Source: RMDB library OK2TST, as collected in RNAgym. Structure probing data (DMS) for a 177-nucleotide construct.
[RMDB]
RNA sequence: GGGAACGACUCGAGUAGAGUCGAAAAUGCUCAGCCACAAACACAAGGCAUCAUGGAGUUUUGUUCAGAAGGGGCCUGGGUGCAAGUCUCUGCAUUGUCCUGUGCUUGCUGUGUGGCCUUCGGCAGGUCGCAAGACUAGUUUCGACUAGUCUUGCGAAAAAGAAACAACAACAACAAC
Reactivity to DMS in 0.01 (KOAc 150mM, MgCl2 10mM, bicine 150mM(pH8.5), 24C), signal-to-noise 3, nucleotides 027 to 126: u000g000c000u010c300a200g000c020c010a030c060a070a060a090c070a050c060a070a060g010g000c010a020u000c110a040u010g010g000a050g000u010u000u000u000g000u000u000c050a040g010a100a070g010g010g000g030c050c030u000g000g020g020u010g000c020a020a090g010u010c020u000c020u000g010c040a040u000u000g010u000c000c020u010g010u000g000c010u010u010g000c120u010g010u010g020u010g010g000c030c030u000u010c230g010g010c040a040g000g020